[RMDB]
RNA sequence: GGGAACGACUCGAGUAGAGUCGAAAAGAUAUGGAGCUCGAAUGGAAUGACGGCUCGGAAACGAGCGUCGAGAGAUUCUGAGCUCCUAAGUCAAACUAAUCUGUACUGUUCGCAGUACAGAUUAGAAUCAUAGCUAAACGUUCGCGUUUAGCUAUGAAAAAGAAACAACAACAACAAC
Reactivity to 2A3 in 0.01 (KOAc 150mM, MgCl2 10mM, bicine 150mM(pH8.5), 24C), signal-to-noise 4, nucleotides 027 to 126: g020a000u040a020u100g000g000a000g000c000u000c000g030a020a000u050g060g130a110a060u060g000a010c050g190g260c000u010c010g000g010a060a030a010c000g000a000g010c000g000u010c010g050a070g000a000g000a020u050u060c140u240g000a020g010c000u000c000c000u000a000a000g010u010c010a000a020a060c010u000a000a010u000c000u010g010u020a000c000u000g110u060u100c300g000c190a000g000u000a000c000a010g000a000u000u010a000g000a010a020
Reactivity to DMS in 0.01 (KOAc 150mM, MgCl2 10mM, bicine 150mM(pH8.5), 24C), signal-to-noise 6, nucleotides 027 to 126: g010a020u010a280u010g000g000a020g020c000u000c000g000a020a010u010g010g010a300a170u010g000a010c000g030g010c000u000c000g000g000a030a070a140c000g010a020g010c000g010u000c010g000a060g020a300g000a040u000u000c000u020g020a010g000c010u000c000c000u000a010a050g010u000c020a130a100a280c000u000a000a000u000c010u000g000u000a000c000u000g010u000u010c190g010c000a010g000u000a000c000a000g000a000u000u000a000g000a110a120
Annotation:
This 177-nucleotide RNA was probed chemically with 2A3 and DMS. The RNA was probed in 150 mM KOAc, 10 mM MgCl2 and 150 mM bicine (pH 8.5) at 24 C. Reactivities are given for positions 27 through 126. For DMS the reverse transcriptase was MarathonRT.